[RMDB]
RNA sequence: GGGAACGACUCGAGUAGAGUCGAAAAACAUCUAAGGACUAUUAUAGUCUAUGAUGAACGACACCAAGAGUUGGCUGAUAGCGACAUGAAAAGGACACGAACAGACACCGAAAGGAAAGCAGGUAGGUGUGACAUAUCGAUUCGUCGAUAUGUCACAAAAAGAAACAACAACAACAAC
Reactivity to 2A3 in 0.01 (KOAc 150mM, MgCl2 10mM, bicine 150mM(pH8.5), 24C), signal-to-noise 4, nucleotides 027 to 126: a000c000a000u020c010u040a080a160g030g000a000c000u020a080u300u100a150u250a130g010u000c000u000a020u100g020a020u000g010a070a030c040g010a010c000a030c070c010a040a000g030a020g090u040u010g030g020c020u020g040a020u020a090g040c010g040a010c050a110u080g050a060a060a020a000g010g030a010c030a000c050g010a140a030c020a050g040a010c020a020c030c000g060a090a010a040g030g050a050a010a020g060c040a000g000g110u100a030g010g110
Reactivity to DMS in 0.01 (KOAc 150mM, MgCl2 10mM, bicine 150mM(pH8.5), 24C), signal-to-noise 4, nucleotides 027 to 126: a100c020a000u010c020u030a110a130g000g020a010c000u000a110u030u040a150u030a020g030u010c010u010a300u030g000a010u000g000a060a100c100g020a110c120a140c030c010a090a120g010a090g000u000u020g000g010c030u010g010a040u010a040g010c030g000a050c080a060u000g000a040a040a080a140g010g000a070c050a050c060g020a050a090c140a140g000a060c040a070c020c020g020a050a080a090g000g000a050a080a050g000c050a040g000g010u010a060g000g000